[RMDB]
Conditions: 150 mM KOAc, 10 mM MgCl2 and 150 mM bicine (pH 8.5), 24 C.
Structure probing data (2A3 and DMS) for a 177-nucleotide construct.
For 2A3, 1,040 sequencing reads were counted.
For DMS the reverse transcriptase was MarathonRT.
RNA sequence: GGGAACGACUCGAGUAGAGUCGAAAAACUGUCACUCCUGCAACAGUAGCCAGCAUGGCUUUAGUACCUUACAGAGAAGAAAUUGACAUUCUUUUCCCUGGUGUGCAAUGGUUUGCUAGGAAUGUUAGAUCAGUGGUACGUUCGCGUACCACUGAUCAAAAGAAACAACAACAACAAC
Reactivity to 2A3 in 0.01 (KOAc 150mM, MgCl2 10mM, bicine 150mM(pH8.5), 24C), signal-to-noise 1, nucleotides 027 to 126: a000c010u050g070u130c000a000c060u000c010c010u000g010c000a030a000c000a040g140u110a000g050c000c000a060g060c110a260u090g000g000c000u000u020u030a000g000u020a030c000c000u000u110a040c030a030g030a000g050a060a000g030a000a010a060u170u170g050a020c020a090u000u010c000u050u010u010u000c030c020c020u040g020g000u000g060u070g030c070a070a090u130g060g050u030u000u070g010c010u040a020g010g010a020a040u030g020u110u070a090
Reactivity to DMS in 0.01 (KOAc 150mM, MgCl2 10mM, bicine 150mM(pH8.5), 24C), signal-to-noise 2, nucleotides 027 to 126: a100c050u010g000u010c050a030c040u000c000c000u010g010c020a040a050c030a220g010u000a100g010c000c000a190g010c280a110u010g020g030c030u020u000u000a090g000u000a070c070c050u000u000a250c170a100g010a060g020a020a030g020a040a020a050u010u000g010a130c300a160u000u000c010u000u000u000u000c000c050c050u000g010g050u020g000u010g020c090a080a080u020g000g000u010u010u010g010c000u000a020g020g000a020a020u020g020u000u000a120